[RMDB]
RNA sequence: GGGAACGACUCGAGUAGAGUCGAAAAGUUAACGAACGAGACCUCAACUAACUAAUUGGUGAUGUUUAUGUUUUAAAUAUAAAUAUCCGUGUUAGAAGGACCAUGUGUGUUUAACACAAGGAAGCGUCAUUCCUCUUCUAUUCGUAGAAGAGGAAUGAAAAGAAACAACAACAACAAC
Reactivity to 2A3 in 0.01 (KOAc 150mM, MgCl2 10mM, bicine 150mM(pH8.5), 24C), signal-to-noise 9, nucleotides 027 to 126: g060u070u070a090a030c060g030a050a010c040g030a050g090a130c010c000u020c080a030a050c010u020a000a000c000u030a090a190u160u140g150g020u220g060a000u000g000u000u000u010a010u000g030u000u050u030u200a110a230a020u070a000u000a010a000a000u010a000u000c000c010g010u010g020u050u010a050g020a190a030g040g000a020c010c020a060u040g010u000g010u010g040u060u150u230a080a000c010a000c010a020a020g060g020a100a030g060c020g050u000
Reactivity to DMS in 0.01 (KOAc 150mM, MgCl2 10mM, bicine 150mM(pH8.5), 24C), signal-to-noise 5, nucleotides 027 to 126: g010u000u020a060a110c110g000a120a060c070g000a170g000a100c010c010u000c090a110a110c000u010a000a060c010u000a100a150u020u020g010g010u030g010a010u000g010u000u000u000a000u010g000u020u020u020u020a050a060a020u010a010u000a000a010a010u000a020u000c000c010g010u010g010u000u000a000g010a100a060g000g010a230c040c010a070u000g010u010g000u010g020u040u040u030a060a020c010a030c040a040a050g000g010a100a090g000c140g000u000

Record summary:
The data come from the RNA Mapping Database (RMDB), libraries RFM100 and RFMREP. The record gives the reactivity of an RNA of 177 nucleotides to 2A3 and DMS. For DMS the reverse transcriptase was MarathonRT. As a SHAPE reagent, 2A3 marks flexible, mostly unpaired nucleotides at the ribose 2'-OH. Reactivities are given for positions 27 through 126.